Structure probing data (2A3 and DMS) for a 177-nucleotide construct.

RNA sequence: GGGAACGACUCGAGUAGAGUCGAAAAGCGCGUGAGGGCGGUGACGAUUCUUUCUUGUAAAACAAAAUGAGGUCGUUGGCGGAGUGUCCAGGCUCACCGUCGUUUUGUUGAGAAACGGUCUGUGCGCCGAGGCAAUUAGAUUCGUCUAAUUGCCUCGAAAAGAAACAACAACAACAAC
Reactivity to 2A3 in 0.01 (KOAc 150mM, MgCl2 10mM, bicine 150mM(pH8.5), 24C), signal-to-noise 2, nucleotides 027 to 126: g030c030g010c020g030u060g070a060g020g070g000c000g010g070u030g020a010c010g010a020u100u070c010u000u070u030c020u030u040g070u080a060a070a040a040c030a030a050a040a050u070g000a020g000g020u000c010g020u040u020g020g030c030g000g030a060g000u060g030u000c010c020a020g010g030c000u000c010a010c000c000g010u020c010g000u010u000u040u030g000u010u140g070a050g020a020a010a000c010g000g020u000c030u000g070u020g000c020g000c020
Reactivity to DMS in 0.01 (KOAc 150mM, MgCl2 10mM, bicine 150mM(pH8.5), 24C), signal-to-noise 5, nucleotides 027 to 126: g020c050g020c030g020u000g010a060g000g010g010c020g010g010u000g000a080c040g010a050u000u010c030u000u000u000c070u000u000g010u000a080a080a080a250c070a020a030a060a060u000g000a060g000g000u000c040g020u010u000g000g010c030g010g010a090g020u000g010u000c030c030a080g010g000c030u000c020a020c010c100g000u000c020g010u000u000u000u000g010u010u000g010a200g000a030a030a020c040g010g000u000c020u000g020u000g000c090g010c040
Notes:
2A3 adducts were read by reverse transcription with SuperScript II with manganese. The data come from the RNA Mapping Database (RMDB), library OK2TRN.